[RMDB]
RNA sequence: GGGAACGACUCGAGUAGAGUCGAAAAGGAAAAGAAGAGCUAUGACCGGCAGCGAUGGGGCUUCCGGCGCGCGGCGCAGGCCCCCGACGGCGCCUCCGAGCCCCGAGCGUCCGCGUCGCGCCCGCAGGUUGCGCAAGCUAUUCGUAGCUUGCGCAACAAAAGAAACAACAACAACAAC
Reactivity to DMS in 0.01 (KOAc 150mM, MgCl2 10mM, bicine 150mM(pH8.5), 24C), signal-to-noise 1, nucleotides 027 to 126: g010g000a080a060a080a200g020a140a060g000a030g020c040u000a070u010g010a070c060c000g000g020c030a090g040c070g010a140u020g000g010g000g010c060u000u020c170c100g010g000c240g010c050g020c030g010g000c040g010c090a090g000g000c060c070c040c060c010g010a070c100g000g000c090g010c020c020u010c140c130g010a070g010c000c050c010c020g010a070g000c190g000u000c000c030g010c080g000u000c020g000c100g010c010c000c040g000c150a080g010

This 177-nucleotide RNA was probed chemically with DMS.
The data come from the RNA Mapping Database (RMDB), library OK2TRN.